[RMDB]
RNA sequence: GGGAACGACUCGAGUAGAGUCGAAAAGAAGCGUAAUCGCUGUAGCGAAGUUAGGGAAUGUUAAAAUAUAGAACCUGACAGAGCGAUCGGCAAUCAAGAAGCUACCGGCGGAAAACGCCUAUAGAAAGGGAAAUAUAAACUUCGGUUUAUAUUUCCCAAAAGAAACAACAACAACAAC
Reactivity to DMS in 0.01 (KOAc 150mM, MgCl2 10mM, bicine 150mM(pH8.5), 24C), signal-to-noise 3, nucleotides 027 to 126: g000a070a190g000c000g020u030a090a120u050c080g000c010u020g000u030a200g020c000g000a300a140g010u000u000a000g070g000g000a040a150u040g000u020u000a040a110a140a040u040a030u010a060g050a210a210c010c000u040g020a000c020a040g010a300g010c010g010a070u040c020g000g050c030a020a130u000c180a200a170g000a130a130g000c050u000a130c100c090g000g000c010g010g000a040a070a080a100c000g020c000c030u010a040u070a110g000a100a200a050
Reactivity to 2A3 in 0.01 (KOAc 150mM, MgCl2 10mM, bicine 150mM(pH8.5), 24C), signal-to-noise 3, nucleotides 027 to 126: g090a030a000g030c080g030u150a050a090u200c140g000c000u010g050u000a020g000c010g000a160a000g010u000u000a030g010g000g040a050a060u130g060u070u180a190a220a230a050u280a030u030a120g070a010a000c000c000u000g000a000c010a000g050a010g020c000g030a040u160c020g020g030c020a010a050u050c030a070a100g060a110a010g040c030u030a050c000c070g020g000c040g040g010a010a120a090a000c000g000c000c000u070a100u030a080g170a020a060a030
Conditions: 150 mM KOAc, 10 mM MgCl2 and 150 mM bicine (pH 8.5), 24 C.
The record gives the reactivity of an RNA of 177 nucleotides to DMS and 2A3.
DMS adducts were read by reverse transcription with MarathonRT.
2A3 adducts were read by reverse transcription with SuperScript II with manganese.
For 2A3, 1,858 sequencing reads were counted.